[RMDB]
RNA sequence: GGGAACGACUCGAGUAGAGUCGAAAACAGAGAGCGGGUUGCUGUGGCUCACAUCUGUAAUCCUAGCUACUUUGGAGGCUGAGGCAGGAGGACUACUUGAGCCUAGGAAUUUGAGACGAGAGUCAGCUCCGUACUACCGUUUCGACGGUAGUACGGAAAAAGAAACAACAACAACAAC
Reactivity to DMS in 0.01 (KOAc 150mM, MgCl2 10mM, bicine 150mM(pH8.5), 24C), signal-to-noise 2, nucleotides 027 to 126: c090a080g040a070g000a090g000c020g090g040g040u010u000g000c030u000g030u000g010g020c020u010c080a050c100a110u000c080u000g020u000a070a110u000c040c010u000a080g010c060u000a120c090u010u000u000g000g020a060g010g010c050u000g010a030g000g000c000a080g030g040a120g000g000a090c030u010a040c050u010u000g020a020g000c040c000u000a070g000g000a050a090u000u000u000g040a110g010a050c080g000a130g000a130g020u010c020a080g010c100
Reactivity to 2A3 in 0.01 (KOAc 150mM, MgCl2 10mM, bicine 150mM(pH8.5), 24C), signal-to-noise 1, nucleotides 027 to 126: c060a000g100a000g050a010g220c000g050g020g040u120u150g000c020u010g070u180g110g080c080u050c000a010c020a140u020c060u110g050u060a070a000u040c010c000u030a040g000c000u160a190c050u070u030u200g070g070a040g030g000c060u040g040a000g050g070c050a020g100g030a010g020g040a030c020u060a010c030u090u060g040a010g060c060c000u040a040g020g050a050a050u110u150u210g020a120g010a020c060g050a000g000a040g050u010c010a030g030c040